[RMDB]
RNA sequence: GGGAACGACUCGAGUAGAGUCGAAAAGAAAGAAAAGAAAAGAAAAGCCCAGACCAGCGGAGGAGACCGCACUUCGGCAACAGCUGAGGUCUAAGUCCUGUAUAUGAUAGGAAAAACAGCUGCAAAACGACCCUAUAGGAUUCGUCCUAUAGGGUCGAAAAGAAACAACAACAACAAC
Reactivity to 2A3 in 0.01 (KOAc 150mM, MgCl2 10mM, bicine 150mM(pH8.5), 24C), signal-to-noise 2, nucleotides 027 to 126: g050a010a050a020g090a090a060a070a020g100a060a180a070a020g070a020a170a020a000g010c000c020c020a010g020a020c000c000a000g060c000g010g010a050g030g080a050g050a030c010c010g010c030a040c000u080u070c000g090g000c020a090a010c000a110g020c000u070g070a040g020g020u060c030u050a100a040g060u000c000c000u020g100u000a050u040a040u300g110a040u060a040g040g000a060a080a050a000a000c000a020g030c020u040g000c030a000a000a090a060
Reactivity to DMS in 0.01 (KOAc 150mM, MgCl2 10mM, bicine 150mM(pH8.5), 24C), signal-to-noise 1, nucleotides 027 to 126: g000a090a140a060g000a190a050a040a190g000a100a060a190a120g010a140a080a070a160g000c000c010c040a070g000a120c020c010a080g000c020g010g020a070g000g050a210g020a040c040c020g010c040a050c140u010u000c020g000g060c100a140a100c090a030g000c000u010g000a060g020g010u010c050u090a060a130g050u000c000c000u050g050u010a070u040a050u000g000a010u000a020g020g000a110a060a070a110a090c030a050g000c000u020g000c070a050a080a110a060
The record gives the reactivity of an RNA of 177 nucleotides to 2A3 and DMS. For DMS, 1,240 sequencing reads were counted. The RNA was probed in 150 mM KOAc, 10 mM MgCl2 and 150 mM bicine (pH 8.5) at 24 C. The data come from the RNA Mapping Database (RMDB), library OK1LIB. 2A3 adducts were read by reverse transcription with SuperScript II with manganese.